[RMDB]
RNA sequence: GGGAACGACUCGAGUAGAGUCGAAAAUGACUGAGUGCACAAGGCCCGCUUGGUUGAUUCGGAUACCUAUUCGAAGCCACCGGGGCCUUGUUGGCACCGCAGCAAACAGGACGCGUCGUCGCGACAAUAGUUAAUGCUUAUUCGUAAGCAUUAACUAAAAAGAAACAACAACAACAAC
Reactivity to DMS in 0.01 (KOAc 150mM, MgCl2 10mM, bicine 150mM(pH8.5), 24C), signal-to-noise 9, nucleotides 027 to 126: u010g010a070c000u000g000a300g010u000g010c000a060c010a010a010g000g010c000c000c000g010c150u030u020g010g010u000u010g010a170u000u000c000g010g000a010u000a130c300c270u030a040u000u000c000g000a010a010g000c040c040a010c050c010g010g000g000g000c000c000u000u000g000u010u010g010g020c000a010c000c030g000c020a010g000c030a060a110a110c140a080g000g010a100c030g010c050g010u020c110g010u010c050g010c030g000a100c110a120a160
Reactivity to 2A3 in 0.01 (KOAc 150mM, MgCl2 10mM, bicine 150mM(pH8.5), 24C), signal-to-noise 9, nucleotides 027 to 126: u150g040a050c030u020g000a000g020u010g000c010a000c000a010a000g010g000c000c000c010g180c130u120u130g020g000u030u070g030a130u010u010c000g010g010a020u210a300c030c090u170a080u040u000c000g010a010a010g020c030c010a010c010c020g000g000g000g000c000c000u000u000g000u000u000g010g010c000a000c000c020g010c000a010g000c000a000a070a030c030a050g090g060a050c020g050c020g060u220c030g030u080c020g040c010g040a030c050a040a110